An RNA of 177 nucleotides, treated with DMS and 2A3 and read out base by base. DMS (dimethyl sulfate) methylates the pairing face of unpaired adenines and cytosines. For 2A3 the reverse transcriptase was SuperScript II with manganese. Conditions: 150 mM KOAc, 10 mM MgCl2 and 150 mM bicine (pH 8.5), 24 C. The data come from the RNA Mapping Database (RMDB), library OK2TRN.
RNA sequence: GGGAACGACUCGAGUAGAGUCGAAAAUAAGACUCUCAAGUUUGAUGCCCUGUCAGGCUCCCAGGAAGUCGAGUUCAUUGGGUAUGGAAAAGCUACACUGGAAUGCCAGGUGCAAACUGCGGUGGACCACAACACAAUACUUCGGUAUUGUGUUGUGAAAAGAAACAACAACAACAAC
Reactivity to DMS in 0.01 (KOAc 150mM, MgCl2 10mM, bicine 150mM(pH8.5), 24C), signal-to-noise 5, nucleotides 027 to 126: u000a120a170g010a070c030u010c030u010c080a150a050g010u010u000u010g010a110u000g010c070c020c020u000g020u010c090a090g020g010c050u000c080c030c010a050g010g010a080a060g020u000c060g010a130g010u000u000c050a050u010u000g020g000g030u010a050u000g010g000a050a040a140a150g000c010u000a050c100a110c020u000g010g010a130a090u010g000c030c010a080g000g000u000g010c040a040a040a040c040u000g000c140g010g020u000g010g000a120c130
Reactivity to 2A3 in 0.01 (KOAc 150mM, MgCl2 10mM, bicine 150mM(pH8.5), 24C), signal-to-noise 4, nucleotides 027 to 126: u170a040a010g040a010c010u020c010u000c070a020a050g010u010u080u080g100a080u110g020c020c020c000u010g070u030c030a020g050g020c000u040c040c010c000a020g060g030a030a020g060u080c070g020a050g070u060u020c020a030u120u160g230g040g070u200a060u080g060g020a050a060a000a030g030c010u040a020c060a020c090u020g010g060a100a060u110g060c010c010a030g010g030u050g000c020a050a070a030c030u060g030c040g070g020u040g040g060a040c030